[RMDB]
RNA sequence: GGGAACGACUCGAGUAGAGUCGAAAACCGUUCCAAGUUGCGUAGUGGACAGCUGGGGCCUAUGCGAAAGCUGGGCCUCACGGUCCAUAAUGUGGCAGGCACAGCGUGAGGCUGGCUUCACAGAGCAGCGACAACUGCCCGCUUCCAACGGUGGAAGGUACUUCCCUUGGUUCGCCAAGGGAAGUACAAAAGAAACAACAACAACAAC
Reactivity to DMS in 0.01 (KOAc 150mM, MgCl2 10mM, bicine 150mM(pH8.5), 24C), signal-to-noise 1, nucleotides 027 to 156: c040c020g050u030u000c020c000a020a300g000u000u000g040c040g060u010a290g060u010g000g000a030c030a030g060c100u000g070g000g000g000c010c000u000a030u000g010c000g020a140a050a150g110c010u010g000g020g000c020c010u040c010a010c000g000g000u010c010c040a020u020a020a110u000g050u020g010g020c060a080g010g000c070a110c000a060g040c000g000u010g020a140g000g020c020u010g000g000c020u000u010c090a080c020a140g000a070g000c040a070g010c010g010a180c120a060a180c020u000g060c010c020c060g020c000u010u000c060c040a040a040c100g040g000u010g010g000a090a110g000
Reactivity to 2A3 in 0.01 (KOAc 150mM, MgCl2 10mM, bicine 150mM(pH8.5), 24C), signal-to-noise 2, nucleotides 027 to 156: c000c010g010u030u000c050c000a080a010g010u020u030g070c110g010u020a020g020u000g020g030a000c030a070g070c200u000g000g000g000g000c010c000u100a130u300g000c020g030a100a010a010g000c000u010g000g020g000c000c000u000c000a000c000g010g000u000c000c000a000u020a020a010u050g010u090g020g000c040a040g080g000c090a020c040a300g030c000g060u100g080a070g070g100c030u050g040g050c010u140u100c090a050c020a070g030a010g010c040a010g000c050g120a060c030a110a040c000u020g000c000c000c000g000c000u000u000c020c020a040a040c040g050g070u030g040g010a010a020g070

This 207-nucleotide RNA was probed chemically with DMS and 2A3. Source: RMDB library ARCHII, as collected in RNAgym. The reactions ran in a buffer of 150 mM KOAc, 10 mM MgCl2 and 150 mM bicine (pH 8.5), at 24 C. For DMS, 1,889 sequencing reads were counted.